This 177-nucleotide RNA was probed chemically with DMS. For DMS the reverse transcriptase was MarathonRT. The reactions ran in a buffer of 150 mM KOAc, 10 mM MgCl2 and 150 mM bicine (pH 8.5), at 24 C. Values cover nucleotides 27 to 126.
RNA sequence: GGGAACGACUCGAGUAGAGUCGAAAAGAUAUGGAAGCAUGUGCACGGUGAAGAGGCGAUAAGAUGAUGGUCGGAAACGACCAUACCAUCUUUUGACGCCUUACACCGUGCACAUGCUUCCUAAGUCCAACACUUGCUCGUUCGCGAGCAAGUGUUGAAAAGAAACAACAACAACAAC
Reactivity to DMS in 0.01 (KOAc 150mM, MgCl2 10mM, bicine 150mM(pH8.5), 24C), signal-to-noise 1, nucleotides 027 to 126: g010a070u010a300u030g020g000a010a000g000c000a000u000g020u000g000c020a000c000g020g000u020g040a260a210g010a000g020g010c010g020a120u000a050a010g030a010u000g020a020u000g000g000u020c020g010g010a080a110a280c040g030a020c000c010a000u000a070c300c020a000u000c020u010u000u000u000g020a280c040g030c000c000u000u000a210c000a000c010c000g000u000g040c000a000c000a000u000g000c010u000u000c000c000u000a030a010g020u000c030